Chemical mapping of a 177-nucleotide RNA with DMS and 2A3. The data come from the RNA Mapping Database (RMDB), library OK2TST. For 2A3, 10,504 sequencing reads were counted. Conditions: 150 mM KOAc, 10 mM MgCl2 and 150 mM bicine (pH 8.5), 24 C. 2A3 is a SHAPE reagent: it acylates the 2'-hydroxyl of flexible nucleotides of all four kinds.
[RMDB]
RNA sequence: GGGAACGACUCGAGUAGAGUCGAAAAAGAAGAACUUCAUCCAGUUCGGGAUUGCGGAAUAGUAACGAGUGGCAAUUUGCUCAUCGAACUCUUCGCGAAUCUCGCCGGUAGCUUCGAAGUCGUGAAGCACCUACUAAGGUUUCGACCUUAGUAGGUGAAAAGAAACAACAACAACAAC
Reactivity to DMS in 0.01 (KOAc 150mM, MgCl2 10mM, bicine 150mM(pH8.5), 24C), signal-to-noise 9, nucleotides 027 to 126: a110g010a100a090g010a100a060c040u000u000c080a140u000c040c040a070g010u000u010c030g020g000g010a020u000u000g000c010g000g010a020a030u000a020g010u010a080a080c030g010a040g010u010g010g010c030a160a210u000u010u010g020c010u010c110a070u000c020g000a140a040c010u000c200u000u000c010g010c000g000a030a020u000c000u000c010g020c300c070g000g000u000a080g010c070u000u000c060g000a070a070g010u000c070g010u010g000a100a090g010
Reactivity to 2A3 in 0.01 (KOAc 150mM, MgCl2 10mM, bicine 150mM(pH8.5), 24C), signal-to-noise 7, nucleotides 027 to 126: a000g130a050a010g040a080a040c020u070u040c040a070u030c020c010a040g020u140u110c010g010g020g000a030u040u040g030c020g030g050a040a100u070a100g030u020a190a080c010g000a050g080u110g030g000c050a110a180u160u090u300g030c060u070c080a120u020c020g000a020a010c010u000c020u020u020c010g000c000g080a020a040u000c010u000c000g020c010c010g010g030u050a030g010c050u060u080c040g030a070a020g030u080c050g040u040g080a050a010g020